Structure probing data (2A3 and DMS) for a 207-nucleotide construct.
The reactions ran in a buffer of 150 mM KOAc, 10 mM MgCl2 and 150 mM bicine (pH 8.5), at 24 C.
As a SHAPE reagent, 2A3 marks flexible, mostly unpaired nucleotides at the ribose 2'-OH.

RNA sequence: GGGAACGACUCGAGUAGAGUCGAAAAAGCGUCAUAAAGAGAGGAUCGUGCCGUACCGGGUUACUUGAUACAGCAUUAAAUCCAAGGUAACUCGCCUUGCCUCAGCCUGCCGGUUGACGGUUGCAAGGUCAAAUCAAAUAACCAGGCUAAGUAUGUAGAUUUGAAUUUACUUCGGUAAAUUCAAAUCAAAAGAAACAACAACAACAAC
Reactivity to 2A3 in 0.01 (KOAc 150mM, MgCl2 10mM, bicine 150mM(pH8.5), 24C), signal-to-noise 4, nucleotides 027 to 156: a000g050c020g020u030c020a050u160a150a140a030g110a020g010a030g070g000a020u060c050g020u040g030c040c020g010u030a040c050c050g000g000g000u030u030a020c010u030u020g020a050u120a140c090a040g090c010a060u090u190a130a140a050u050c090c040a030a020g040g010u020a020a010c020u010c030g010c000c010u000u010g000c000c010u040c030a000g000c000c000u070g070c050c050g030g000u030u070g050a030c040g030g000u040u060g020c010a020a010g020g000u020c030a030a060a030u090c010a000a030a050u060a030a030c040c040a020g020g000c010u020a040a010g060u080a100u150g060u050a060
Reactivity to DMS in 0.01 (KOAc 150mM, MgCl2 10mM, bicine 150mM(pH8.5), 24C), signal-to-noise 2, nucleotides 027 to 156: a060g010c040g020u000c030a150u000a110a070a100g010a140g010a140g000g000a050u000c080g030u000g010c010c030g010u000a040c030c000g020g020g010u000u000a020c050u020u010g010a070u000a100c060a050g000c030a080u000u010a080a090a110u000c050c040a090a050g010g010u000a040a050c020u000c050g020c020c010u000u000g000c010c020u000c040a050g010c000c030u010g010c020c040g000g030u000u000g020a060c050g020g030u000u000g020c030a050a050g000g040u000c050a050a030a100u010c090a060a040a040u010a030a070c030c020a110g030g010c020u000a050a110g000u000a040u000g000u000a130